An RNA of 177 nucleotides, treated with DMS and 2A3 and read out base by base.
For 2A3 the reverse transcriptase was SuperScript II with manganese.
The reactions ran in a buffer of 150 mM KOAc, 10 mM MgCl2 and 150 mM bicine (pH 8.5), at 24 C.
Reactivities are given for positions 27 through 126.
The data come from the RNA Mapping Database (RMDB), libraries RFM100 and RFMREP.
RNA sequence: GGGAACGACUCGAGUAGAGUCGAAAAGGGGGGGCUUCUUAGCUGAGAUUGAGUCCACGUGUUUUUGGAUUCUGACCCUUUGAACCUGUUCGUUAAUACGAGCGUAGGGAUUGUGGCGAUUGCAUUUAACACAUAUUGGGUUCGCCCAAUAUGUGUUAAAAGAAACAACAACAACAAC
Reactivity to DMS in 0.01 (KOAc 150mM, MgCl2 10mM, bicine 150mM(pH8.5), 24C), signal-to-noise 2, nucleotides 027 to 126: g020g020g010g020g000g000g000c040u010u050c130u000u060a080g000c020u010g010a070g020a210u040u020g020a020g000u000c000c000a060c300g020u020g000u010u010u050u000u020g000g000a010u000u000c000u000g000a140c000c000c010u000u000u000g020a160a120c010c020u010g020u000u000c020g010u020u010a140a090u050a060c070g010a040g030c010g010u040a070g000g000g000a220u000u020g010u000g030g010c190g000a110u030u000g000c080a160u000u000u010
Reactivity to 2A3 in 0.01 (KOAc 150mM, MgCl2 10mM, bicine 150mM(pH8.5), 24C), signal-to-noise 1, nucleotides 027 to 126: g000g000g000g020g010g010g000c000u000u020c020u200u290a030g000c020u050g060a020g010a100u100u150g040a040g010u030c000c000a060c110g020u050g110u110u020u000u050u050g010g020a000u000u000c020u020g040a050c010c010c110u060u010u000g030a020a020c000c000u000g050u000u000c000g000u000u180a040a050u160a130c040g000a000g030c000g070u120a080g000g050g000a040u080u110g050u140g060g000c030g070a120u040u180g000c000a010u030u020u000